[RMDB]
The record gives the reactivity of an RNA of 177 nucleotides to 2A3 and DMS. For 2A3, 3,236 sequencing reads were counted. For 2A3 the reverse transcriptase was SuperScript II with manganese. It was measured as part of the RMDB library OK1LIB. For DMS the reverse transcriptase was MarathonRT. For DMS, 3,266 sequencing reads were counted. The reactions ran in a buffer of 150 mM KOAc, 10 mM MgCl2 and 150 mM bicine (pH 8.5), at 24 C. 2A3 is a SHAPE reagent: it acylates the 2'-hydroxyl of flexible nucleotides of all four kinds.
RNA sequence: GGGAACGACUCGAGUAGAGUCGAAAAUUCAUGGAGACCCAUCCCACACUGGAUGCCUUACACUGUGACAUCGGCAAUGCCACUGAGUUUUACAAAAUAUUCCAAGAUGAGAUUGGGGAGGUGUCCCACUAGUACGACCGUUCGCGGUCGUACUAGUAAAAGAAACAACAACAACAAC
Reactivity to 2A3 in 0.01 (KOAc 150mM, MgCl2 10mM, bicine 150mM(pH8.5), 24C), signal-to-noise 4, nucleotides 027 to 126: u100u040c040a050u110g040g020a090g020a080c000c000c020a040u040c010c030c000a050c020a000c030u060g010g030a030u040g020c010c020u050u080a030c070a010c060u050g030u080g070a030c030a030u030c020g030g030c030a050a040u090g010c010c000a070c020u070g020a050g120u090u080u030u040a100c100a010a180a040a050u150a110u070u010c020c000a050a030g060a170u110g030a050g030a110u090u090g010g000g020g000a010g000g050u030g040u000c000c000c000
Reactivity to DMS in 0.01 (KOAc 150mM, MgCl2 10mM, bicine 150mM(pH8.5), 24C), signal-to-noise 3, nucleotides 027 to 126: u060u040c060a080u020g000g020a120g020a120c000c030c020a100u010c040c000c020a100c240a090c090u000g000g010a050u000g050c030c060u000u040a080c100a000c060u000g020u010g010a060c060a020u030c090g060g010c110a170a030u010g010c000c030a030c130u010g000a080g000u000u000u010u030a140c280a080a050a080a090u040a090u020u030c000c000a060a110g000a100u000g000a140g010a100u020u000g000g020g000g000a030g030g000u010g010u010c020c000c070